Structure probing data (2A3 and DMS) for a 177-nucleotide construct. Source: RMDB library RFM100, as collected in RNAgym. Reactivities are rounded to 0.1 and cut off at 0 and 3. For 2A3 the reverse transcriptase was SuperScript II with manganese. For DMS, 1,451 sequencing reads were counted.
RNA sequence: GGGAACGACUCGAGUAGAGUCGAAAAAGAGAAGGGUUAGUAAACGGUAGAAAACCCAUUUAUUGUAUGUCAUUGGCUGUUCGAGAUUAAGCAGCUGUAAUUCGAUGGCCAUACUCAUUAAAUGGGUUUAGAGGGGCAAUUUCGAUUGCCCCUCUAAAAAAGAAACAACAACAACAAC
Reactivity to 2A3 in 0.01 (KOAc 150mM, MgCl2 10mM, bicine 150mM(pH8.5), 24C), signal-to-noise 1, nucleotides 027 to 126: a050g100a010g070a090a010g190g040g000u080u070a030g000u090a010a010a010c030g080g140u120a050g030a050a140a000a000c000c000c050a000u010u010u010a050u030u000g070u030a190u110g030u090c300a160u050u150g000g020c000u000g110u190u000c150g000a140g020a250u120u050a070a050g020c120a000g020c060u080g070u050a050a000u040u070c060g000a000u000g050g000c030c000a000u020a000c000u000c030a000u000u010a000a010a000u000g000g000g000u010
Reactivity to DMS in 0.01 (KOAc 150mM, MgCl2 10mM, bicine 150mM(pH8.5), 24C), signal-to-noise 1, nucleotides 027 to 126: a060g000a090g000a110a050g000g020g000u000u050a030g140u000a130a050a120c180g000g020u030a100g000a100a030a110a020c020c000c000a020u000u000u000a000u000u010g040u030a030u070g000u030c200a050u010u030g000g000c020u000g000u050u010c000g010a100g120a000u000u070a020a110g010c130a050g000c020u020g000u000a000a000u010u010c000g000a010u030g000g000c020c010a020u000a030c020u000c010a010u010u000a000a000a000u000g000g010g000u000